[RMDB]
RNA sequence: GGGAACGACUCGAGUAGAGUCGAAAAGUAUGGGAUCAGCGGCAGGUUCAGGAUCAGCAGAAUCAGGUUGCCCAGAUACAUCGAAAUGAUGACUGCCCAAAAGAUCUGCGGAUCGUCCACCAUCAGCUUGAUCUGACAGGUUCGCCUGUCAGAUCAAAAAAGAAACAACAACAACAAC
Reactivity to DMS in 0.01 (KOAc 150mM, MgCl2 10mM, bicine 150mM(pH8.5), 24C), signal-to-noise 2, nucleotides 027 to 126: g000u010a130u040g030g060g020a060u030c090a100g000c030g030g000c110a060g010g020u000u000c040a130g050g000a010u010c040a120g010c030a060g000a120a010u000c020a030g000g030u060u020g000c020c080c070a030g010a090u060a140c000a000u020c020g000a110a080a170u030g000a000u000g000a130c000u000g040c070c030c000a040a060a020a000g000a040u020c010u010g000c040g050g000a030u000c020g020u030c110c040a010c010c010a060u000c060a040g050c120
Reactivity to 2A3 in 0.01 (KOAc 150mM, MgCl2 10mM, bicine 150mM(pH8.5), 24C), signal-to-noise 2, nucleotides 027 to 126: g100u070a080u140g080g000g000a040u080c040a030g020c030g100g000c040a030g090g000u100u080c040a010g000g080a020u030c000a090g030c020a000g000a090a090u020c000a040g100g050u060u070g000c020c030c000a010g000a020u110a080c020a020u050c020g030a250a050a080u210g000a000u010g040a070c000u030g000c000c010c000a090a170a000a010g000a030u010c050u000g000c040g050g000a030u000c010g060u000c010c020a050c010c000a070u090c000a000g050c000

An RNA of 177 nucleotides, treated with DMS and 2A3 and read out base by base. Reactivities are given for positions 27 through 126. DMS adducts were read by reverse transcription with MarathonRT. It was measured as part of the RMDB library RFM100. High 2A3 reactivity points to a flexible backbone, as in loops and unpaired stretches. For 2A3 the reverse transcriptase was SuperScript II with manganese.